[RMDB]
RNA sequence: GGGAACGACUCGAGUAGAGUCGAAAACGCAGAAUGGCGUGAGCCUCUGGAUGUUGCAUGGCAUACUCCCGCAGGCGGUAAUAGUGUGCGGUCAUCGCGUCACAUUCUGUACGGCAGGCAUGGUGGCGAACGAGUCUGUUUUCGAACAGACUCGUUCAAAAGAAACAACAACAACAAC
Reactivity to 2A3 in 0.01 (KOAc 150mM, MgCl2 10mM, bicine 150mM(pH8.5), 24C), signal-to-noise 1, nucleotides 027 to 126: c080g000c000a000g030a110a090u090g050g000c020g030u030g050a010g010c030c020u050c020u070g090g030a080u120g060u100u060g110c160a170u100g030g000c020a000u070a110c020u040c000c020c020g000c020a030g030g070c080g030g080u090a100a050u100a150g090u090g060u030g060c030g000g040u030c040a060u090c030g020c020g060u090c030a040c000a100u050u000c010u080g050u090a080c040g030g010c030a010g020g070c030a040u050g030g000u000g010g030c030
Reactivity to DMS in 0.01 (KOAc 150mM, MgCl2 10mM, bicine 150mM(pH8.5), 24C), signal-to-noise 2, nucleotides 027 to 126: c110g020c020a040g000a080a070u000g020g000c010g000u000g010a180g000c060c040u000c040u000g000g020a060u000g010u000u010g020c070a100u010g010g010c020a080u010a080c130u000c040c010c000g000c080a030g000g010c010g010g020u000a050a080u010a120g010u000g010u000g000c030g010g010u000c150a070u010c070g020c010g000u020c040a060c070a090u000u000c040u000g000u000a120c070g040g000c030a080g010g000c110a020u000g010g020u010g000g010c080